[RMDB]
RNA sequence: GGGAACGACUCGAGUAGAGUCGAAAAUAGUGGCAUUGAUCAUGUUUUUCUUGAAUUUGACCUCUGGCUUUUUGACAUAUGUGGUUUUCCUGUUGAGUACAUGGAACGAUUCAAGUUUGAGCGCCUCAACACACAUUCAUUUUUGGGUAAUCACAUGCCCCGACAGGAAUCUGGAGAUCGUUGGACCUGGAUACUUAACACUUUACGCAACGUGGCCUUGACUGGAGCAAGUCUUGAUUGUCCUCCUCGCACUCCUUUGUGCGUUAGAUAAAGGCUUCGGCCUUUAUAAAAGAAACAACAACAACAAC
Reactivity to DMS in 0.01 (KOAc 150mM, MgCl2 10mM, bicine 150mM(pH8.5), 24C), signal-to-noise 2, nucleotides 027 to 266: u010a060g020u000g000g030c050a040u000u010g000a130u010c120a040u010g050u000u000u010u020u010c030u010u000g000a020a050u010u020u010g020a130c050c010u000c070u010g010g010c040u000u010u010u030u000g010a070c150a060u020a070u000g020u010g000g000u000u000u010u000c020c030u010g010u000u000g000a030g000u000a120c050a050u000g000g020a040a100c140g000a120u020u020c110a040a120g000u000u000u010g010a090g020c140g040c160c020u000c090a040a030c070a110c170a060c100a070u000u010c120a090u000u010u010u000u000g000g000g000u000a010a070u020c070a130c110a030u000g000c300c020c040c030g000a070c070a060g000g000a030a060u030c090u000g010g000a100g000a040u010c060g010u010u010g000g000a050c100c070u010g000g020a110u020a020c130u000u010a040a070c090a100c100u010u020u010a070c120g030c070a020a060c090g020u020g000g000c000c000u000u000g010a050c070u010g010g000a080g000c050a020a040g000u000c080u030u010g000a090u020u010g000u000c050c030u000c040c020u000c000g010c010a020c020u000c260c080u000u020u020g020u010g010c000g000u000u000a060g020
Reactivity to 2A3 in 0.01 (KOAc 150mM, MgCl2 10mM, bicine 150mM(pH8.5), 24C), signal-to-noise 2, nucleotides 027 to 266: u100a000g080u030g000g010c020a050u070u100g020a030u140c040a060u030g090u070u150u060u090u020c040u120u120g120a250a240u160u030u140g040a100c000c050u040c080u090g030g050c150u240u200u070u140u100g070a060c060a030u230a110u090g040u050g100g070u000u030u170u080c010c050u010g000u020u010g030a020g010u020a050c050a090u120g120g030a060a030c040g040a010u130u180c070a120a060g040u000u040u060g090a040g060c040g090c060c020u090c070a080a000c030a000c000a020c030a060u040u150c030a120u080u110u110u130u060g050g020g020u060a120a020u040c000a010c000a050u020g000c020c010c030c020g030a030c010a010g090g050a070a130u100c020u030g030g020a060g030a100u030c030g050u050u000g010g020a020c000c040u020g050g000a040u040a140c010u060u090a110a040c030a010c070u020u140u210a030c070g030c120a100a000c070g060u040g100g030c000c000u030u050g050a020c010u050g010g000a010g040c000a060a000g000u050c050u070u070g150a140u000u060g040u030c010c000u010c010c010u020c020g050c020a000c010u160c070c110u120u060u070g030u030g010c020g040u020u060a020g000